The data come from the RNA Mapping Database (RMDB), library M2RFPK. Chemical mapping of a 207-nucleotide RNA with DMS and 2A3. The 2A3 profile rests on 6,203 reads.
[RMDB]
RNA sequence: GGGAACGACUCGAGUAGAGUCGAAAAGAAACAGGAUCGACAAGGGUGUAAAGAUCGCUCUUUUACUCGGCAUGAUACCACCGUUAUCGGGUCAACAGAGCAGUUGCAAAUGACAACAAUGCUCAGGAAGGGGUAGCACCGUUCGCGGUGCUACCAACUAGACCUUGAGUUUCGACUCAAGGUCUAGAAAAGAAACAACAACAACAAC
Reactivity to DMS in 0.01 (KOAc 150mM, MgCl2 10mM, bicine 150mM(pH8.5), 24C), signal-to-noise 2, nucleotides 027 to 156: g020a090a090a080c030a150g000g010a090u000c010g040a090c090a050a050g010g010g020u000g030u000a050a100a140g000a110u000c040g000c020u000c040u010u000u000u000a060c060u010c000g020g000c010a060u000g010a100u010a090c030c020a060c020c030g030u010u020a070u000c080g000g000g010u000c020a110a090c050a110g020a000g030c000a160g050u000u000g000c010a030a170a160u000g030a170c000a010a020c000a030a020u000g000c020u000c030a120g000g010a140a120g020g030g030g050u000a000g020c010a020c000c020g050u000u000c230g030c030g020g010u000g000c000u000a000c000c030a000a020
Reactivity to 2A3 in 0.01 (KOAc 150mM, MgCl2 10mM, bicine 150mM(pH8.5), 24C), signal-to-noise 7, nucleotides 027 to 156: g020a010a120a010c060a050g120g040a050u060c030g050a040c090a100a080g080g060g030u090g030u170a090a090a010g050a040u080c020g020c030u030c010u000u080u030u050a110c050u040c010g010g000c020a020u100g000a000u020a010c000c010a010c010c010g050u070u060a020u070c030g000g010g000u000c010a030a030c050a030g000a000g000c020a040g000u000u010g010c020a060a210a280u210g110a130c000a020a000c010a070a230u070g010c000u010c020a000g040g060a070a060g020g050g000g000u000a000g000c000a000c030c010g020u040u060c250g000c020g070g000u000g000c000u000a000c000c000a000a000